[RMDB]
Chemical mapping of a 177-nucleotide RNA with DMS and 2A3.
For DMS the reverse transcriptase was MarathonRT.
It was measured as part of the RMDB library TTRDEL.
The RNA was probed in 150 mM KOAc, 10 mM MgCl2 and 150 mM bicine (pH 8.5) at 24 C.
RNA sequence: GGGAACGACUCGAGUAGAGUCGAAAAGAUAUGGACCUACUCCCCACCGACAGCGACGAAGCUUCUCGGAAACGAGAAGCAGAGCUGCGAGGUAGGUCCUAAGUCAAAACCCAAGUUCGCUUGGGAAUCAUACCAAAACCUUCGGGUUUUGGUAUGAAAAAGAAACAACAACAACAAC
Reactivity to DMS in 0.01 (KOAc 150mM, MgCl2 10mM, bicine 150mM(pH8.5), 24C), signal-to-noise 2, nucleotides 027 to 126: g010a060u000a190u010g010g000a000c000c020u000a000c010u000c110c020c070c080a300c200c060g020a120c030a000g000c000g010a120c210g040a050a090g000c010u000u000c010u010c020g000g000a020a050a150c000g000a010g020a020a000g010c000a000g000a090g010c000u000g020c040g020a080g000g010u010a000g000g010u000c000c000u000a020a060g010u020c090a080a110a130a140c000c000c000a010a020g000u000u020c170g030c000u000u000g020g000g020a050a040
Reactivity to 2A3 in 0.01 (KOAc 150mM, MgCl2 10mM, bicine 150mM(pH8.5), 24C), signal-to-noise 2, nucleotides 027 to 126: g030a060u130a140u210g000g000a000c000c000u020a000c040u190c080c120c040c010a100c040c020g300a280c100a000g040c000g300a300c000g010a300a020g040c020u010u010c000u010c000g030g040a080a060a030c020g000a000g000a000a010g000c000a000g000a000g000c000u030g080c020g020a000g100g000u000a000g000g010u010c010c000u010a040a000g120u080c060a050a080a140a250c000c020c020a010a010g020u040u130c300g030c150u000u000g000g060g000a010a090